[RMDB]
RNA sequence: GGGAACGACUCGAGUAGAGUCGAAAAUUUCUAGCACUUUUCUAUUCUCGUUUCCUUUUUUUGUACCUUCCCCUUUUGAAUUUUCCAUCGUAUAAGCCUCAGAAAUUUGGUAGACACUUAAUGAUGAAGAGUACUCAAUGUUCGCAUUGAGUACUCUAAAAGAAACAACAACAACAAC
Reactivity to 2A3 in 0.01 (KOAc 150mM, MgCl2 10mM, bicine 150mM(pH8.5), 24C), signal-to-noise 2, nucleotides 027 to 126: u050u040u000c030u020a060g040c030a020c090u120u080u050u020c030u050a120u100u040c030u010c010g050u020u060u040c020c000u070u070u000u010u000u070u200g030u050a050c000c000u010u010c050c010c000c040u000u090u040u120g050a050a040u110u050u100u010c020c010a070u010c010g030u020a030u010a220a050g020c020c020u020c000a030g100a120a110a020u110u080u050g050g000u000a050g060a030c000a000c110u070u120a100a010u170g120a020u010g060a030
Reactivity to DMS in 0.01 (KOAc 150mM, MgCl2 10mM, bicine 150mM(pH8.5), 24C), signal-to-noise 1, nucleotides 027 to 126: u000u010u010c040u000a130g010c030a050c010u030u000u000u010c030u010a110u020u070c030u020c030g010u000u010u010c030c020u000u000u000u000u010u000u000g000u000a060c050c020u000u000c030c000c020c050u000u110u010u000g020a100a060u000u000u000u000c040c000a020u000c080g010u010a080u050a050a100g000c080c000u000c050a090g000a020a020a050u000u030u000g000g000u030a070g000a070c130a120c050u000u000a060a120u010g010a020u000g010a170
Record summary: Chemical mapping of a 177-nucleotide RNA with 2A3 and DMS. Source: RMDB library RFM100, as collected in RNAgym. The DMS profile rests on 1,715 reads. For DMS the reverse transcriptase was MarathonRT. 2A3 adducts were read by reverse transcription with SuperScript II with manganese. The RNA was probed in 150 mM KOAc, 10 mM MgCl2 and 150 mM bicine (pH 8.5) at 24 C.